Description
An RNA of 177 nucleotides, treated with 2A3 and DMS and read out base by base. The data come from the RNA Mapping Database (RMDB), library RFMREP. For DMS, 9,431 sequencing reads were counted.

[RMDB]
RNA sequence: GGGAACGACUCGAGUAGAGUCGAAAAAGAGGAUAUGUCUCAAUUUGUUCUGCAUUGAUGCCGCAGCGGGGACGGGGGCCAGGCCAUGGCUGCUCAGAUACAUGGGCCCAUGAAAUUGAUGAACUGAACUAUAGUUACAGUUCGCUGUAACUAUAGUAAAAGAAACAACAACAACAAC
Reactivity to 2A3 in 0.01 (KOAc 150mM, MgCl2 10mM, bicine 150mM(pH8.5), 24C), signal-to-noise 3, nucleotides 027 to 126: a010g110a020g050g020a060u070a050u250g070u010c020u010c040a050a080u070u050u080g070u080u040c020u030g050c010a080u020u140g060a040u110g070c040c030g040c050a030g020c030g010g020g010g010a030c020g000g000g010g000g000c010c000a020g030g000c000c000a020u030g040g010c060u050g000c010u020c010a020g010a070u170a130c070a080u020g010g010g010c000c010c010a010u040g050a030a070a040u140u140g030a070u090g040a080a030c040u020g010a020
Reactivity to DMS in 0.01 (KOAc 150mM, MgCl2 10mM, bicine 150mM(pH8.5), 24C), signal-to-noise 7, nucleotides 027 to 126: a090g010a080g000g010a120u010a060u010g010u000c020u000c030a080a110u010u000u000g010u010u000c030u000g010c060a080u010u000g010a090u010g010c080c070g030c050a070g020c080g010g000g000g000a080c090g010g000g010g010g010c060c040a060g010g010c100c030a030u000g000g010c120u010g030c010u010c020a030g010a160u010a070c170a100u000g000g000g010c010c020c010a040u010g010a040a060a080u010u010g010a090u010g010a070a090c080u000g010a100